[RMDB]
RNA sequence: GGGAACGACUCGAGUAGAGUCGAAAAGGAGCGGGUCCUGUGCAACGCGAACCCAUGAACCUGGUCAGGUCCGGAAGGAAGCAGCCAUAAGUGGAUCAUCGCGUGUGCCGCAGGGUAGCCUGCUCUGAGCUGCUACCAUAAGUAACGCUCGGAUAAGCUAAACCAAUUGCUUCGGCAAUUGGUUUAGAAAAGAAACAACAACAACAAC
Reactivity to 2A3 in 0.01 (KOAc 150mM, MgCl2 10mM, bicine 150mM(pH8.5), 24C), signal-to-noise 2, nucleotides 027 to 156: g040g000a000g000c010g020g050g010u300c000c000u010g010u030g000c010a010a000c010g000c010g000a010a010c000c000c000a000u030g010a010a030c020c070u000g000g060u120c000a010g030g000u000c010c000g090g150a110a050g060g000a020a020g000c010a000g000c010c000a010u020a100a000g020u000g020g000a020u020c000a010u000c040g010c000g040u110g220u040g040c020c040g010c000a000g000g000g000u020a000g000c000c000u000g000c000u000c000u000g000a000g000c040u090g000c010u060a090c050c030a150u080a250a010g030u010a070a060c050g000c020u020c070g070g000a250u190a140a020g000
Reactivity to DMS in 0.01 (KOAc 150mM, MgCl2 10mM, bicine 150mM(pH8.5), 24C), signal-to-noise 1, nucleotides 027 to 156: g020g000a060g050c000g010g010g010u000c020c010u000g010u000g040c020a090a010c020g020c000g010a140a110c070c000c000a030u000g000a170a200c110c090u000g020g040u000c040a300g000g000u000c010c000g000g050a220a160g010g050a050a050g030c020a170g020c000c030a010u000a110a300g050u000g000g010a060u000c010a050u000c010g060c010g000u000g010u020g000c120c140g010c000a030g050g020g000u000a190g040c020c000u000g000c010u000c000u000g000a050g020c010u000g090c010u000a040c020c050a150u020a120a130g020u000a050a030c020g020c010u000c010g010g000a130u000a070a090g010

Conditions: 150 mM KOAc, 10 mM MgCl2 and 150 mM bicine (pH 8.5), 24 C.
Chemical mapping of a 207-nucleotide RNA with 2A3 and DMS.
For 2A3 the reverse transcriptase was SuperScript II with manganese.